[RMDB]
Conditions: 150 mM KOAc, 10 mM MgCl2 and 150 mM bicine (pH 8.5), 24 C.
Structure probing data (DMS and 2A3) for a 177-nucleotide construct.
High DMS reactivity at an A or C suggests that its Watson-Crick edge is free.
For DMS the reverse transcriptase was MarathonRT.
For DMS, 2,328 sequencing reads were counted.
Values cover nucleotides 27 to 126.
Source: RMDB libraries RFM100 and RFMREP, as collected in RNAgym.
RNA sequence: GGGAACGACUCGAGUAGAGUCGAAAAGGGGUGGAGCCGUCGAUGAGACACCGCCCACCUCCAGCUGUGGAGCUAACUCCCGCUGGGAGGACAUCGGUAGGUGGGCAGUUUGGGUGGGGCGCCACUCGACCAUGUAGCCAUUCGUGGCUACAUGGUCAAAAGAAACAACAACAACAAC
Reactivity to DMS in 0.01 (KOAc 150mM, MgCl2 10mM, bicine 150mM(pH8.5), 24C), signal-to-noise 1, nucleotides 027 to 126: g030g000g000g020u000g000g020a090g010c010c070g050u010c060g000a130u070g010a160g010a070c060a080c150c110g030c000c000c000a030c000c000u010c000c000a040g000c000u000g050u080g010g000a020g000c080u030a090a120c000u000c000c000c000g000c160u080g020g020g000a000g020g000a080c120a100u000c110g000g000u020a000g000g000u020g000g000g010c040a080g000u000u000u000g000g010g000u070g000g020g000g000c000g000c000c030a000c000u000c030
Reactivity to 2A3 in 0.01 (KOAc 150mM, MgCl2 10mM, bicine 150mM(pH8.5), 24C), signal-to-noise 5, nucleotides 027 to 126: g000g000g000g010u080g010g030a020g010c060c020g080u090c030g070a200u250g050a010g000a030c010a000c030c010g000c000c000c010a010c000c000u000c000c000a000g000c020u120g050u300g200g140a030g020c070u080a100a130c010u000c000c000c000g080c130u130g010g010g000a070g000g040a050c030a110u080c090g030g050u160a030g000g000u000g010g000g010c040a020g000u010u100u130g070g000g020u210g000g030g000g000c020g010c000c000a020c010u060c000